[RMDB]
RNA sequence: GGGAACGACUCGAGUAGAGUCGAAAAUGAUGGUACUCACGGUACUGGUUACAUUGUCGGUGCUGGACUCGAUGCUGAUGAUGUGGCUUUUGCUGAUGCUACUAACAGUCCGGUCGAGACGCAGUAAAGUGCAUAUGGUGUUCGCACCAUAUGCACUAAAAGAAACAACAACAACAAC
Reactivity to 2A3 in 0.01 (KOAc 150mM, MgCl2 10mM, bicine 150mM(pH8.5), 24C), signal-to-noise 3, nucleotides 027 to 126: u140g040a020u120g000g010u040a020c010u050c080a060c080g090g000u040a020c020u010g010g010u060u060a060c030a090u060u050g050u050c030g020g030u070g060c050u040g020g120a060c040u040c060g050a070u090g050c020u040g000a090u000g000a010u050g040u000g010g000c000u050u090u120u110g050c100u120g030a130u130g030c040u020a020c010u010a060a100c000a060g020u000c030c010g010g020u030c020g020a030g000a060c070g000c070a020g020u060a040a160
Reactivity to DMS in 0.01 (KOAc 150mM, MgCl2 10mM, bicine 150mM(pH8.5), 24C), signal-to-noise 3, nucleotides 027 to 126: u010g000a150u000g000g030u000a020c010u010c110a140c130g000g020u010a000c020u010g000g020u000u000a050c070a040u000u000g010u000c050g020g010u000g020c050u000g010g010a100c040u000c070g000a070u010g000c020u000g010a060u000g010a090u000g000u000g000g030c020u000u000u010u020g020c150u010g020a120u010g020c300u000a040c020u000a090a090c080a080g010u000c100c070g000g010u010c040g000a060g000a160c080g010c050a050g020u010a050a060
This 177-nucleotide RNA was probed chemically with 2A3 and DMS. Reactivities are rounded to 0.1 and cut off at 0 and 3. The data come from the RNA Mapping Database (RMDB), library OK2TST. The DMS profile rests on 3,276 reads. DMS adducts were read by reverse transcription with MarathonRT. In probing experiments dimethyl sulfate is read out at A N1 and C N3, which are open when not base-paired. For 2A3 the reverse transcriptase was SuperScript II with manganese.